[RMDB]
Structure probing data (2A3 and DMS) for a 177-nucleotide construct.
It was measured as part of the RMDB library OK2TST.
For 2A3 the reverse transcriptase was SuperScript II with manganese.
RNA sequence: GGGAACGACUCGAGUAGAGUCGAAAAGGCUCCCCACUCUGCCAGAGCGAGGCGGGGCAGUGAGGACUCCGCGACGCGUCCGCACCCUGCGGCCAGAGCGGCUUUGAGCUCGGCUGCGUCCGCGCUAAGUCAGUGAGGGAUUCGUCCCUCACUGACUAAAAGAAACAACAACAACAAC
Reactivity to 2A3 in 0.01 (KOAc 150mM, MgCl2 10mM, bicine 150mM(pH8.5), 24C), signal-to-noise 1, nucleotides 027 to 126: g050g060c050u060c000c000c040c000a010c020u070c030u060g070c060c040a100g010a060g100c010g020a010g120g000c060g020g020g000g020c050a030g050u040g160a050g020g070a030c030u010c040c010g050c030g090a090c020g030c050g030u020c020c020g040c020a110c010c060c050u120g000c010g030g040c000c010a050g040a030g020c010g070g000c000u100u050u200g070a010g000c000u030c100g050g000c030u060g020c000g040u010c040c000g000c010g050c050u070a090
Reactivity to DMS in 0.01 (KOAc 150mM, MgCl2 10mM, bicine 150mM(pH8.5), 24C), signal-to-noise 2, nucleotides 027 to 126: g000g010c130u000c000c040c020c020a090c080u000c000u000g000c060c070a090g000a130g000c070g000a150g020g020c060g020g000g010g000c060a010g070u010g000a070g010g010a160c050u020c040c040g010c030g000a120c060g010c100g000u000c020c030g010c030a130c110c050c120u010g010c030g010g010c010c000a070g000a260g000c090g010g010c300u000u010u020g010a120g020c020u010c020g010g030c000u000g010c030g000u010c020c030g000c050g020c120u000a050